[RMDB]
RNA sequence: GGGAACGACUCGAGUAGAGUCGAAAAGGGGUUAGGGUUUGCAAAACGCUGUUAUUGCAAUGAUCUGGAUUUAGCGCAAGUAGGUCCGAAAUCCAGAUCAACAUUUCGGACCUCCGCGCUAAUAAAAUGCCACAACAGGAUUCGUCCUGUUGUGGCAAAAAGAAACAACAACAACAAC
Reactivity to DMS in 0.01 (KOAc 150mM, MgCl2 10mM, bicine 150mM(pH8.5), 24C), signal-to-noise 1, nucleotides 027 to 126: g000g000g000g030u000u000a050g000g010g010u030u000u020g000c000a010a010a070a030c030g030c130u010g000u000u000a070u000u000g010c040a040a090u030g000a070u030c120u000g000g000a190u000u000u000a010g020c000g000c000a070a120g030u010a000g000g010u000c010c000g030a000a000a010u000c100c160a070g000a100u020c230a080a030c180a050u000u000u000c000g000g000a010c000c000u000c040c180g030c000g020c000u010a000a000u000a060a050a060a050

The record gives the reactivity of an RNA of 177 nucleotides to DMS. DMS adducts were read by reverse transcription with MarathonRT.